[RMDB]
RNA sequence: GGGAACGACUCGAGUAGAGUCGAAAAGAUAUGGAAAGGUGUAAGAUUCUGUUUCGUUUGACGAUUUCUCGGAAACGAGAAAUCCGAGAAACAGGGAGAUUAUCACCUUUCCUAAGUCAAACACUGGCAUGCCAGAUUCGUCUGGCAUGCCAGUGAAACCAUGUACCCGUUUCGACGGGUACAUGGUAAAAGAAACAACAACAACAAC
Reactivity to 2A3 in 0.01 (KOAc 150mM, MgCl2 10mM, bicine 150mM(pH8.5), 24C), signal-to-noise 1, nucleotides 027 to 156: g000a020u010a000u040g000g000a000a040a010g050g010u030g020u060a300a220g020a050u300u190c010u010g020u010u000u000c090g030u170u200u150g010a020c010g000a000u010u000u020c000u000c000g000g010a000a000a000c000g000a000g000a000a000a000u000c000c010g020a050g000a010a000a000c010a000g010g030g000a300g010a010u000u000a000u040c000a000c000c030u010u000u000c000c000u000a000a000g000u000c010a100a000a040c010a000c010u000g000g000c000a000u000g030c010c000a020g010a050u030u120c230g060u010c090u010g000g040c010a000u000g000c000c000a010g000u000g010a000a000